An RNA of 177 nucleotides, treated with 2A3 and DMS and read out base by base. Conditions: 150 mM KOAc, 10 mM MgCl2 and 150 mM bicine (pH 8.5), 24 C. For DMS the reverse transcriptase was MarathonRT. It was measured as part of the RMDB library TTRDES.
RNA sequence: GGGAACGACUCGAGUAGAGUCGAAAAGAUAUGGAGCCAUCCAUAUCCUCGCAGGCUCGGAAACGAGCCUGAACUACGAGGUAUGGAGUGGCUCCUAAGUCAAAGAGGUCAGCUUCGGCUGACCUCAGUACUUAAUCCACUUCGGUGGAUUAAGUACAAAAGAAACAACAACAACAAC
Reactivity to 2A3 in 0.01 (KOAc 150mM, MgCl2 10mM, bicine 150mM(pH8.5), 24C), signal-to-noise 1, nucleotides 027 to 126: g030a040u110a050u210g000g000a000g000c000c010a000u000c010c000a000u010a060u200c020c000u000c010g030c010a010g010g020c010u000c030g010g050a140a110a060c010g000a000g010c000c000u000g010a000a000c040u070a050c040g010a010g010g010u010a000u010g000g000a050g060u070g010g000c010u000c000c020u020a000a000g010u000c010a020a000a160g030a000g000g000u000c000a000g000c020u100u180c300g100g020c000u020g020a000c000c000u000c000a010
Reactivity to DMS in 0.01 (KOAc 150mM, MgCl2 10mM, bicine 150mM(pH8.5), 24C), signal-to-noise 3, nucleotides 027 to 126: g020a020u000a300u010g010g000a000g010c000c000a090u000c000c000a010u000a010u010c010c010u000c000g000c000a020g000g020c000u000c000g020g010a100a120a260c010g000a010g010c000c010u010g010a030a030c150u040a300c040g010a020g000g030u010a010u000g000g010a050g030u010g020g020c000u000c010c000u000a020a060g000u020c100a070a100a120g000a020g000g000u010c000a010g010c000u010u020c220g030g020c000u000g000a000c010c000u000c000a040